[RMDB]
RNA sequence: GGGAACGACUCGAGUAGAGUCGAAAAGCGCGGCUCGACGAGCUCGACCGCUUCGAACGCCGCAGCUCGCACAUCGCCGAGCAACUGUACGACGAGGCGCUGCAAUGCCGGAUGCGCCCGUUCGGCAGCUCCACUGACGAUUCGUCGUCAGUGGAGCAAAAGAAACAACAACAACAAC
Reactivity to DMS in 0.01 (KOAc 150mM, MgCl2 10mM, bicine 150mM(pH8.5), 24C), signal-to-noise 2, nucleotides 027 to 126: g000c020g010c000g010g000c030u000c060g000a300c230g000a060g040c030u020c070g070a060c210c110g030c050u000u000c030g000a140a130c130g000c040c030g050c070a120g010c020u010c010g010c070a110c220a080u030c080g020c040c000g010a080g000c030a090a130c100u010g000u000a100c010g020a090c010g000a160g000g050c030g000c040u000g000c150a160a150u000g020c050c090g000g000a110u000g000c000g020c000c000c020g030u000u000c010g010g020c000a120
Reactivity to 2A3 in 0.01 (KOAc 150mM, MgCl2 10mM, bicine 150mM(pH8.5), 24C), signal-to-noise 2, nucleotides 027 to 126: g060c010g000c000g020g010c020u000c070g030a010c020g030a020g000c040u030c060g150a100c000c040g000c000u000u020c040g060a070a010c070g020c020c040g000c030a010g000c010u030c020g060c000a070c010a300u150c100g060c160c010g050a020g000c000a050a070c050u100g030u270a120c080g040a010c010g040a150g000g000c020g000c010u040g000c060a150a290u150g110c020c020g000g060a030u070g020c010g000c000c000c000g020u040u050c000g010g000c010a010
About this RNA
Source: RMDB library OK2TRN, as collected in RNAgym. Chemical mapping of a 177-nucleotide RNA with DMS and 2A3.